[RMDB]
RNA sequence: GGGAACGACUCGAGUAGAGUCGAAAAGCGGGUGUCUUUCCACGCGCCUGCAGAGCUUCGUUCUUCUGCUGCUGACGAAGCUCGAUGGACUUGCACAUCGUCCUCAGUGUGCGACAGCAGCAUUGACCCGCCUACGACGUUUCGACGUCGUAGGCGGAAAAGAAACAACAACAACAAC
Reactivity to 2A3 in 0.01 (KOAc 150mM, MgCl2 10mM, bicine 150mM(pH8.5), 24C), signal-to-noise 1, nucleotides 027 to 126: g040c000g020g000g000u010g020u270c150u090u250u150c080c010a070c040g090c010g020c050c000u020g010c000a000g000a000g010c000u020u010c000g000u160u000c010u120u030c030u000g030c000u030g000c010u020g000a010c010g000a000a000g000c000u000c000g000a040u120g010g000a060c050u030u170g010c000a020c000a090u080c030g070u030c000c060u040c060a040g000u000g020u000g030c000g000a000c020a010g030c000a000g000c000a000u030u150g070a060c000